This 177-nucleotide RNA was probed chemically with 2A3 and DMS. The reactions ran in a buffer of 150 mM KOAc, 10 mM MgCl2 and 150 mM bicine (pH 8.5), at 24 C. It was measured as part of the RMDB library OK1LIB. For DMS, 11,206 sequencing reads were counted.

RNA sequence: GGGAACGACUCGAGUAGAGUCGAAAAUGGUGUUAAGUGGAAUAAGUGGAAAAAUAUACAUAUAUGUACAGGGGGCUACAUAUAUGUAUAUGCCCCCUCACCUCAGUAUAAGUAGGUAUAAGGUGGAGGAGGGUAAUAUAUUCGUAUAUUACCCUCCAAAAGAAACAACAACAACAAC
Reactivity to 2A3 in 0.01 (KOAc 150mM, MgCl2 10mM, bicine 150mM(pH8.5), 24C), signal-to-noise 3, nucleotides 027 to 126: u130g050g010u010g010u080u090a120a070g040u080g100g070a090a090u100a170a050g030u200g030g040a070a050a010a090a020u020a000u000a010c000a000u000a000u000a000u010g010u000a030c060a080g000g000g130g000g090c010u010a000c000a000u010a000u000a000u020g000u000a000u000a000u000g000c000c000c000c010c000u010c000a010c000c000u000c030a030g070u080a060u030a300a050g150u160a010g070g020u040a070u010a110a050g030g000u040g000g020a100
Reactivity to DMS in 0.01 (KOAc 150mM, MgCl2 10mM, bicine 150mM(pH8.5), 24C), signal-to-noise 4, nucleotides 027 to 126: u010g000g010u000g010u000u010a040a180g020u010g010g010a130a050u030a080a110g010u020g000g020a030a080a040a080a040u000a010u000a010c000a000u000a010u000a010u000g000u000a000c090a120g020g010g000g010g000c180u000a000c010a010u000a020u000a000u000g000u000a000u000a000u000g010c080c020c010c010c010u010c050a010c000c010u000c070a110g010u020a060u020a040a110g000u050a050g000g010u010a030u020a070a030g000g020u000g000g010a300